[RMDB]
RNA sequence: GGGAACGACUCGAGUAGAGUCGAAAAGAGACUCAGACACUGUCAGAGACUCUGAGAGACUGUGAGUCAGAGUCACAGUCACACUCUGUGAGAGUCUGUGAGAGAGACAGUCUCACACUCUGAGUCUUCAGGAAGGGUAUUUCGAUACCCUUCCUGAAAAAGAAACAACAACAACAAC
Reactivity to DMS in 0.01 (KOAc 150mM, MgCl2 10mM, bicine 150mM(pH8.5), 24C), signal-to-noise 3, nucleotides 027 to 126: g010a050g010a030c000u000c010a020g000a100c170a080c060u020g010u000c050a130g000a090g000a020c000u000c010u020g000a040g000a140g000a030c000u000g000u000g000a010g010u010c190a130g010a200g000u000c000a000c010a010g010u000c000a130c200a130c040u000c020u010g020u000g020a070g000a030g000u000c020u000g010u000g000a070g000a070g020a100g000a100c090a020g000u010c070u000c060a090c070a060c130u000c010u010g000a020g000u000c010u010
Reactivity to 2A3 in 0.01 (KOAc 150mM, MgCl2 10mM, bicine 150mM(pH8.5), 24C), signal-to-noise 2, nucleotides 027 to 126: g050a020g000a010c000u000c000a000g020a030c020a010c100u040g040u070c030a020g010a010g000a210c010u000c020u060g000a040g000a000g000a020c000u030g000u000g030a020g180u180c150a040g040a020g210u000c000a000c000a000g010u000c000a010c000a000c060u000c000u030g160u140g210a050g010a010g060u000c010u000g080u130g020a130g000a020g010a010g030a050c020a030g040u000c010u040c010a020c000a010c060u000c020u020g020a010g050u030c000u050

Structure probing data (DMS and 2A3) for a 177-nucleotide construct. For 2A3, 2,585 sequencing reads were counted. The RNA was probed in 150 mM KOAc, 10 mM MgCl2 and 150 mM bicine (pH 8.5) at 24 C.